Conditions: 150 mM KOAc, 10 mM MgCl2 and 150 mM bicine (pH 8.5), 24 C. Structure probing data (DMS and 2A3) for a 177-nucleotide construct. 2A3 is a SHAPE reagent: it acylates the 2'-hydroxyl of flexible nucleotides of all four kinds. The data come from the RNA Mapping Database (RMDB), library VIROID.
[RMDB]
RNA sequence: GGGAACGACUCGAGUAGAGUCGAAAACUUAUGGGAGAAAUGAUCACCUCUCAGCCCCUCCACCUUGGGGUGCCCUAUCCGAGCACUGCUGUUUCGGUAGAAAGGCUAAGCACGUCGCAAUGACGUACCAAUGGAACUACUUCGGUAGUUCCAUUGGAAAAGAAACAACAACAACAAC
Reactivity to DMS in 0.01 (KOAc 150mM, MgCl2 10mM, bicine 150mM(pH8.5), 24C), signal-to-noise 2, nucleotides 027 to 126: c100u000u000a040u000g020g000g000a010g000a030a030a070u000g000a150u010c130a170c280c000u000c000u000c010a030g000c010c000c000c040u000c140c120a090c100c080u000u010g010g000g000g040u000g000c000c000c000u000a080u010c000c000g010a040g000c010a070c230u030g030c190u000g010u000u000u000c020g000g020u000a030g010a030a100a130g000g030c000u000a000a100g010c110a030c000g010u000c000g040c220a080a130u020g000a000c010g000u000a150
Reactivity to 2A3 in 0.01 (KOAc 150mM, MgCl2 10mM, bicine 150mM(pH8.5), 24C), signal-to-noise 2, nucleotides 027 to 126: c010u060u000a020u020g000g000g010a010g020a020a110a070u130g070a130u210c030a020c000c000u020c000u010c000a020g020c000c000c000c000u000c030c010a180c000c030u020u060g030g000g000g000u020g000c000c000c000u010a010u050c010c020g020a010g040c060a100c200u300g060c090u090g140u120u300u060c000g000g010u000a000g020a020a010a000g010g000c040u020a000a000g090c080a000c020g000u000c010g060c170a200a300u240g020a000c000g000u010a040